[RMDB]
RNA sequence: GGGAACGACUCGAGUAGAGUCGAAAAACCAGCAGGCGUGACCCGAUUUGGAUUGCUCGUGUUCAAUGACAGGUCUUAUUAUUAGCGAGAUACGAUUAAGCCUUGUCUAGCGGUUUGAUAAGAGAUUGAUAGACUCGCAGUUUCUAGACUUGAGUUACAAUGAGCAUGAGUUCGCUCAUGCUCAUUGAAAAGAAACAACAACAACAAC
Reactivity to DMS in 0.01 (KOAc 150mM, MgCl2 10mM, bicine 150mM(pH8.5), 24C), signal-to-noise 1, nucleotides 027 to 156: a100c010c020a150g050c080a010g010g000c060g040u010g000a190c000c010c000g030a170u000u000u000g000g000a150u000u010g020c060u000c120g050u000g010u000u000c070a050a070u000g000a220c100a030g030g020u010c030u000u000a030u010u000a070u000u000a140g060c030g000a030g020a080u000a080c030g010a090u000u000a040a080g010c030c010u000u010g020u000c000u000a100g040c100g000g010u000u010u000g030a050u000a020a060g020a130g000a080u000u000g000a100u010a140g020a080c020u000c010g000c060a120g030u000u000u000c110u000a070g000a040c050u000u000g020a090g010u010u000a190
Reactivity to 2A3 in 0.01 (KOAc 150mM, MgCl2 10mM, bicine 150mM(pH8.5), 24C), signal-to-noise 3, nucleotides 027 to 156: a010c020c000a010g110c050a010g090g000c060g080u090g010a030c000c000c000g030a010u060u010u020g030g000a040u050u130g030c020u020c080g070u050g020u100u040c020a030a020u050g030a030c010a050g000g030u060c040u010u080a100u060u060a060u030u110a020g030c020g010a000g020a020u080a080c070g000a020u040u070a060a030g000c030c000u040u090g030u030c040u040a030g040c010g060g050u050u060u060g050a050u070a100a080g030a020g020a030u090u150g080a050u060a100g050a060c000u020c040g020c020a010g020u050u050u070c050u020a020g010a070c000u030u080g030a020g020u070u010a040
Source: RMDB library ARCHII, as collected in RNAgym. The record gives the reactivity of an RNA of 207 nucleotides to DMS and 2A3. Values cover nucleotides 27 to 156. The RNA was probed in 150 mM KOAc, 10 mM MgCl2 and 150 mM bicine (pH 8.5) at 24 C.